Structure probing data (DMS and 2A3) for a 177-nucleotide construct. The data come from the RNA Mapping Database (RMDB), library OK2TRN. 2A3 adducts were read by reverse transcription with SuperScript II with manganese.

RNA sequence: GGGAACGACUCGAGUAGAGUCGAAAAAGAGGUCGGGGAGCCAACACAGGGAGUGGAGCGCUCAGUCACAUGCUCACUGCCACUCACCUGGCUGUCCUGGGGGAGCCUGGCUUCUCCCUCAAGGAGGCAUCGCACGAGGAUUCGUCCUCGUGCGAUGAAAAGAAACAACAACAACAAC
Reactivity to DMS in 0.01 (KOAc 150mM, MgCl2 10mM, bicine 150mM(pH8.5), 24C), signal-to-noise 2, nucleotides 027 to 126: a020g010a060g020g050u010c060g030g010g000g020a060g040c020c090a070a080c240a130c120a000g000g000g000a020g010u000g010g010a070g010c080g010c110u000c060a050g020u010c260a140c120a120u000g000c070u000c030a050c030u000g010c030c000a040c020u000c000a100c020c010u000g000g000c030u000g000u010c030c030u000g000g000g000g010g000a070g000c240c040u010g000g000c060u010u000c000u000c000c000c010u010c040a050a110g000g010a300g000g010
Reactivity to 2A3 in 0.01 (KOAc 150mM, MgCl2 10mM, bicine 150mM(pH8.5), 24C), signal-to-noise 1, nucleotides 027 to 126: a010g030a030g050g000u040c060g040g000g000g000a060g030c010c030a070a060c060a020c060a070g010g030g000a020g010u070g010g050a040g000c050g010c010u090c090a080g120u150c030a140c010a220u150g020c000u020c070a060c010u170g110c030c000a020c000u020c010a300c010c010u010g000g050c070u090g110u160c030c000u030g030g000g010g000g020a020g000c020c120u050g010g000c000u040u010c010u000c000c000c000u000c000a040a060g040g020a010g000g050